[RMDB]
RNA sequence: GGGAACGACUCGAGUAGAGUCGAAAAAUCGUGACGCCGUCCGGACCUAUCCAGGCAGGGCUGUCCUGAGCUUCGACGGGAGAAUUGACAGCAGCCCUCCAGCAGCUCAUUCUCGGUUUGACGCCGGUCUUCGGAGGGGGUUCGCCCCCUUCGAAGGAAAAGAAACAACAACAACAAC
Reactivity to 2A3 in 0.01 (KOAc 150mM, MgCl2 10mM, bicine 150mM(pH8.5), 24C), signal-to-noise 2, nucleotides 027 to 126: a000u300c060g020u140g080a000c020g000c110c000g000u000c010c000g000g000a140c010c010u060a170u000c030c000a010g050g000c040a010g010g010g020c010u000g020u030c000c020u050g040a050g050c010u050u050c030g150a160c050g040g050g000a040g030a030a090u130u110g060a020c020a030g000c020a010g000c000c000c000u000c000c010a020g020c010a020g010c000u000c020a110u130u010c050u000c000g040g020u030u040u160g030a010c050g010c030c010g050g000